Structure probing data (DMS and 2A3) for a 207-nucleotide construct. Values cover nucleotides 27 to 156. The data come from the RNA Mapping Database (RMDB), library M2RFPK.

RNA sequence: GGGAACGACUCGAGUAGAGUCGAAAAACGGUGCGGAAGUUCGCGCUUCCGUGAAACGCGAAAAUCGGACGGUGGCUGCAAGUCGCAUCGCAAAACCGCGGCAAGUGGAGUUAGCGAGAGGAAGCUGAAACCAUCCAACACUUCGGUGUUGGAUGAAGAAGCAACUUAGUUUCGACUAAGUUGCUUCAAAAGAAACAACAACAACAAC
Reactivity to DMS in 0.01 (KOAc 150mM, MgCl2 10mM, bicine 150mM(pH8.5), 24C), signal-to-noise 2, nucleotides 027 to 156: a040c020g000g050u000g000c010g020g010a050a060g030u010u010c210g010c190g010c010u010u000c000c110g030u000g010a040a040a040c040g020c030g010a060a030a100a100u000c070g010g010a050c020g010g040u000g020g000c020u000g050c000a080a110g020u020c040g010c000a110u000c020g000c040a070a070a110a110c050c080g010c060g000g000c010a050a110g010u000g000g030a170g010u000u010a080g020c050g010a100g030a100g010g000a130a100g010c020u000g010a140a080a160c090c000a030u000c000c000a020a020c000a010c000u000u010c260g020g030u000g020u000u000g000g010a000u000g010a050a100
Reactivity to 2A3 in 0.01 (KOAc 150mM, MgCl2 10mM, bicine 150mM(pH8.5), 24C), signal-to-noise 5, nucleotides 027 to 156: a000c040g020g010u050g010c010g020g020a010a050g040u090u110c050g030c040g000c060u020u000c010c010g000u020g020a100a060a010c080g010c030g070a070a050a010a100u120c030g010g010a010c010g020g010u030g020g020c050u090g010c070a090a040g030u020c020g010c020a040u030c030g000c050a050a050a010a010c020c010g010c010g060g010c090a080a090g010u040g050g020a070g010u090u080a030g030c030g020a020g000a020g060g040a050a030g000c050u050g010a080a010a010c010c000a000u000c000c000a000a000c000a000c010u060u090c230g110g000u010g000u010u000g000g010a000u010g000a000a020